Description:
Structure probing data (DMS and 2A3) for a 177-nucleotide construct. DMS adducts were read by reverse transcription with MarathonRT. The 2A3 profile rests on 38,536 reads.
RNA sequence: GGGAACGACUCGAGUAGAGUCGAAAAAGCAGGUGCUCUGGGACGACCUUCCCAGGUAACGACUGUAUUGAUGCAUUCCGAAAUUGACUGACCGGAAUGCGGGUGUCUGACACUAGCAAUAUCGGUCGUUUGUACUUAUUUUCGAAUAAGUACAAACAAAAGAAACAACAACAACAAC
Reactivity to DMS in 0.01 (KOAc 150mM, MgCl2 10mM, bicine 150mM(pH8.5), 24C), signal-to-noise 9, nucleotides 027 to 126: a060g010c060a130g010g010u020g000c060u010c010u000g010g000g000a060c150g010a100c100c070u010u010c000c010c000a050g010g020u040a050a050c030g000a020c000u000g000u000a010u000u000g010a170u050g010c010a000u000u000c000c000g000a050a090a110u030u030g010a130c180u020g010a210c150c010g000g000a010a010u000g000c000g000g010g010u000g000u000c130u020g010a050c010a010c010u010a160g010c020a010a010u000a030u030c030g000g000u000c010
Reactivity to 2A3 in 0.01 (KOAc 150mM, MgCl2 10mM, bicine 150mM(pH8.5), 24C), signal-to-noise 9, nucleotides 027 to 126: a000g080c070a030g030g090u100g030c030u040c010u140g010g010g010a030c050g070a070c030c010u050u040c000c000c000a000g020g020u040a050a020c040g040a020c010u010g020u030a060u030u060g100a100u220g000c010a000u010u000c000c000g030a050a080a080u150u170g090a120c070u070g030a060c060c000g000g000a000a000u010g000c000g010g010g000u040g010u030c260u200g070a030c010a000c020u060a050g060c040a050a040u030a060u200c030g000g000u000c020